[RMDB]
RNA sequence: GGGAACGACUCGAGUAGAGUCGAAAAGUUGUAAACUUCGGUUUACAACAAAUAAGAGAGAAAAGCUCUCCAUCGCUCUUCCAAGCGACAACGGAUCCAAAAAAACCCAGCUCUUCGGAGCUGGGAAGGUAGAUAGAAAGUUCGCUUUCUAUCUACCAAAAGAAACAACAACAACAAC
Reactivity to DMS in 0.01 (KOAc 150mM, MgCl2 10mM, bicine 150mM(pH8.5), 24C), signal-to-noise 2, nucleotides 027 to 126: g020u000u000g010u000a020a000a000c000u000u010c120g030g010u000u010u000a000c000a000a000c000a060a080a100u010a070a100g000a060g010a020g010a190a140a140a270g000c030u000c010u000c000c100a060u000c040g010c010u020c030u000u010c050c050a140a090g010c010g000a040c090a050a030c070g000g020a070u000c040c030a000a000a060a090a080a130a130c000c010c000a000g000c000u000c000u000u010c220g010g000a000g020c000u000g000g000g000a000a000
Reactivity to 2A3 in 0.01 (KOAc 150mM, MgCl2 10mM, bicine 150mM(pH8.5), 24C), signal-to-noise 2, nucleotides 027 to 126: g000u000u000g010u000a030a000a000c000u040u050c120g020g010u000u000u010a000c000a010a000c020a000a040a000u080a030a020g020a000g000a000g050a050a190a070a170g110c000u010c000u000c020c010a100u050c020g020c010u030c030u110u030c040c010a010a010g010c000g020a010c010a070a000c030g050g020a040u080c060c040a050a060a010a020a060a130a150c000c000c000a000g030c000u010c010u020u100c240g090g000a010g000c000u010g000g000g000a000a000
The record gives the reactivity of an RNA of 177 nucleotides to DMS and 2A3. For DMS, 1,610 sequencing reads were counted. For 2A3, 3,500 sequencing reads were counted. The data come from the RNA Mapping Database (RMDB), library M2PK50. The RNA was probed in 150 mM KOAc, 10 mM MgCl2 and 150 mM bicine (pH 8.5) at 24 C. Values cover nucleotides 27 to 126.